[RMDB]
RNA sequence: GGGAACGACUCGAGUAGAGUCGAAAACGACUAGAGUUCGCUCUAGUCGAAAAACCGUAGGCGUGGAUCAGGGAGCUCGUCUGGUUCGAAAGAGCCAGCGAGCAUCGAUCUGAUAGAGCGCCUAAACGGAAAAAAUGCUUGCUUUCGAGCAAGCAAAUCUUAAGUACUGGUUCGCCAGUACUUAAGAAAAAGAAACAACAACAACAAC
Reactivity to DMS in 0.01 (KOAc 150mM, MgCl2 10mM, bicine 150mM(pH8.5), 24C), signal-to-noise 1, nucleotides 027 to 156: c000g010a050c010u000a000g000a010g070u000u010c240g030c020u000c000u000a000g000u010c020g000a000a010a040a110a130c020c020g010u000a050g030g000c000g070u000g000g010a080u000c000a030g010g020g000a050g000c010u010c010g030u000c020u010g000g020u010u000c000g000a230a180a220g000a020g030c020c000a000g070c000g000a000g010c010a020u000c020g010a020u000c000u000g000a020u000a060g000a300g020c000g020c010c020u010a000a040a030c020g000g050a000a030a050a130a070a140u000g020c000u000u020g050c010u010u000u030c280g020a020g050c030a040a030g010c000a000a020a060
Reactivity to 2A3 in 0.01 (KOAc 150mM, MgCl2 10mM, bicine 150mM(pH8.5), 24C), signal-to-noise 2, nucleotides 027 to 156: c000g000a000c010u020a000g000a000g030u050u060c100g100c060u010c000u000a010g010u010c000g000a000a020a000a040a020c020c000g010u010a020g000g020c070g060u130g080g120a020u000c000a000g000g020g000a010g000c010u040c030g260u180c120u000g010g020u010u000c000g030a150a120a090g010a020g000c000c000a000g010c000g010a000g010c000a000u020c000g000a030u020c000u000g000a000u030a040g270a040g010c000g010c000c000u000a010a030a000c010g000g120a040a010a010a000a030a140u130g010c000u010u020g000c010u050u070u130c300g070a010g000c000a000a000g000c000a000a040a000